[RMDB]
RNA sequence: GGGAACGACUCGAGUAGAGUCGAAAAUGAAGCAGCAUAAGCUCCCUGAUGUAAGCUCCCUGAAUAAAUUCACAGCAAUACAUCAAAGUAGUAUGAAAGUUGGCCAGUAUAAAUAAAUUCCCUGUUAACGUAUACUAUCGUUCGCGAUAGUAUACGUAAAAGAAACAACAACAACAAC
Reactivity to DMS in 0.01 (KOAc 150mM, MgCl2 10mM, bicine 150mM(pH8.5), 24C), signal-to-noise 4, nucleotides 027 to 126: u010g030a230a130g020c020a070g020c020a060u000a080a120g000c020u000c030c070c030u000g010a030u000g000u010a030a290g000c010u010c020c030c030u000g000a020a060u010a070a140a150u000u000c000a000c170a040g010c030a050a120u010a020c000a010u000c020a040a050a080g000u000a040g010u000a030u000g010a060a050a070g010u010u000g010g010c010c020a060g010u010a070u000a050a050a090u000a020a060a210u010u000c000c000c000u000g010u000u010a160
Reactivity to 2A3 in 0.01 (KOAc 150mM, MgCl2 10mM, bicine 150mM(pH8.5), 24C), signal-to-noise 2, nucleotides 027 to 126: u170g020a070a000g060c020a000g000c020a020u020a090a020g010c010u040c000c000c000u030g010a010u020g030u000a080a010g020c010u010c010c000c010u030g030a010a010u150a210a220a150u070u000c010a060c020a000g000c000a020a130u060a040c000a010u010c000a040a080a020g020u010a010g010u000a080u040g030a220a070a090g070u050u050g160g070c030c030a000g060u070a110u050a230a120a010u110a030a030a050u050u010c000c000c000u010g120u050u090a050
The data come from the RNA Mapping Database (RMDB), library RFMREP. Structure probing data (DMS and 2A3) for a 177-nucleotide construct. Reactivities are given for positions 27 through 126. For 2A3 the reverse transcriptase was SuperScript II with manganese. For DMS the reverse transcriptase was MarathonRT. Reactivities are rounded to 0.1 and cut off at 0 and 3.